This 177-nucleotide RNA was probed chemically with DMS and 2A3. The 2A3 profile rests on 975 reads. 2A3 adducts were read by reverse transcription with SuperScript II with manganese. The reactions ran in a buffer of 150 mM KOAc, 10 mM MgCl2 and 150 mM bicine (pH 8.5), at 24 C. For DMS, 3,294 sequencing reads were counted.
[RMDB]
RNA sequence: GGGAACGACUCGAGUAGAGUCGAAAAUGCGGUAAUGGCACUCAUUUAUUUAGCGUUGUAAAUGCGGCUCCUAAUGGUUUCCUGUUUUUACAUACUGUGCUGGUACCUACAGAGUGGCAGCAGGUACAAGCGCUUAAUUAUUCGUAAUUAAGCGCUUAAAAGAAACAACAACAACAAC
Reactivity to DMS in 0.01 (KOAc 150mM, MgCl2 10mM, bicine 150mM(pH8.5), 24C), signal-to-noise 3, nucleotides 027 to 126: u010g010c050g020g000u000a050a080u000g000g010c050a110c070u020c040a060u000u010u000a070u010u010u010a120g020c070g010u020u010g000u010a030a070a080u020g000c070g010g000c040u000c030c030u000a050a060u010g010g010u000u010u000c040c020u000g010u010u010u000u000u010a060c130a180u000a060c090u000g030u010g010c010u000g020g010u000a000c000c010u000a140c230a130g000a150g020u000g000g010c050a050g010c060a120g010g010u000a020c250
Reactivity to 2A3 in 0.01 (KOAc 150mM, MgCl2 10mM, bicine 150mM(pH8.5), 24C), signal-to-noise 1, nucleotides 027 to 126: u060g010c030g000g010u080a040a120u060g050g020c050a020c040u090c010a050u030u010u250a090u050u110u120a070g030c060g020u000u020g110u200a050a050a000u040g030c020g040g060c030u060c000c020u150a150a100u140g140g010u000u020u010c010c000u000g070u030u060u000u040u030a040c020a020u030a000c010u110g010u050g280c020u010g050g240u000a000c000c000u010a110c040a060g170a020g100u020g020g000c000a030g020c000a000g010g020u020a020c060